[RMDB]
RNA sequence: GGGAACGACUCGAGUAGAGUCGAAAAUGAAGGGCAGGCUUUCGCGCUCGGCCGCCGUCAACGUCCGCGACGGCAUCGGCGUCAGCCAGACGUCGGCGUCGAGGCCGAUCUGAUGCGAGGCAUGGCCACGCUAGGAUCAGUUCGCUGAUCCUAGCGUAAAAGAAACAACAACAACAAC
Reactivity to 2A3 in 0.01 (KOAc 150mM, MgCl2 10mM, bicine 150mM(pH8.5), 24C), signal-to-noise 6, nucleotides 027 to 126: u270g030a070a090g030g020g000c020a010g010g010c000u240u300u160c010g000c000g020c010u000c000g000g020c020c020g000c010c010g020u020c020a080a090c070g100u060c050c060g030c050g020a010c000g000g040c000a020u080c070g040g010c000g000u000c000a050g100c090c040a060g030a050c040g010u080c030g000g000c000g020u080c050g030a080g000g000c000c000g000a030u040c060u140g130a170u150g000c010g000a000g000g010c020a030u090g060g020c000c000
Reactivity to DMS in 0.01 (KOAc 150mM, MgCl2 10mM, bicine 150mM(pH8.5), 24C), signal-to-noise 3, nucleotides 027 to 126: u090g030a110a080g000g000g020c010a010g000g030c010u000u040u000c000g000c030g000c090u010c010g020g010c000c020g050c010c010g010u000c030a090a060c080g010u010c040c300g020c100g020a070c000g000g000c020a080u010c110g010g010c000g010u010c000a090g030c120c170a130g000a050c030g000u010c050g000g000c040g020u040c020g020a150g000g000c000c000g010a020u030c190u060g010a080u020g000c000g010a000g000g010c000a030u040g010g010c000c000
Chemical mapping of a 177-nucleotide RNA with 2A3 and DMS. DMS adducts were read by reverse transcription with MarathonRT. The RNA was probed in 150 mM KOAc, 10 mM MgCl2 and 150 mM bicine (pH 8.5) at 24 C.